[RMDB]
Structure probing data (DMS and 2A3) for a 177-nucleotide construct. DMS adducts were read by reverse transcription with MarathonRT. The data come from the RNA Mapping Database (RMDB), library OK2TST. For 2A3, 1,009 sequencing reads were counted. 2A3 adducts were read by reverse transcription with SuperScript II with manganese.
RNA sequence: GGGAACGACUCGAGUAGAGUCGAAAAGAACAGGAUCAAAAGGGUGCCAACGGUGAUGGCAUGGCUGUGAUAUCGUCCCUAAGAUCCUUCGAUCGCGAGCAGCAAAAGGAAUAUAUGAUUCCUAUUGGUAUAUGGACCCUUUCGAGGGUCCAUAUACAAAAGAAACAACAACAACAAC
Reactivity to DMS in 0.01 (KOAc 150mM, MgCl2 10mM, bicine 150mM(pH8.5), 24C), signal-to-noise 2, nucleotides 027 to 126: g000a040a100c180a030g000g000a030u020c010a030a130a140a060g010g030g020u000g020c110c100a050a040c100g010g000u010g000a080u000g050g030c010a110u010g030g020c020u000g020u000g000a060u020a060u000c080g000u000c010c010c000u010a060a230g000a000u000c010c000u000u000c090g000a090u000c040g010c050g010a120g010c100a050g000c040a030a030a170a030g010g000a020a000u010a190u010a130u000g000a130u010u000c000c000u010a130u010u000g000
Reactivity to 2A3 in 0.01 (KOAc 150mM, MgCl2 10mM, bicine 150mM(pH8.5), 24C), signal-to-noise 1, nucleotides 027 to 126: g040a020a080c070a060g020g040a000u030c010a010a000a080a130g060g020g050u060g080c060c030a060a030c060g070g070u100g060a180u040g020g010c020a040u090g130g010c070u070g030u080g100a010u000a010u140c070g040u020c020c000c000u000a040a010g010a030u030c000c000u080u010c040g040a030u070c040g010c010g050a060g000c090a000g010c030a100a000a090a000g010g000a020a000u040a000u030a020u250g170a080u070u020c010c010u010a110u060u140g010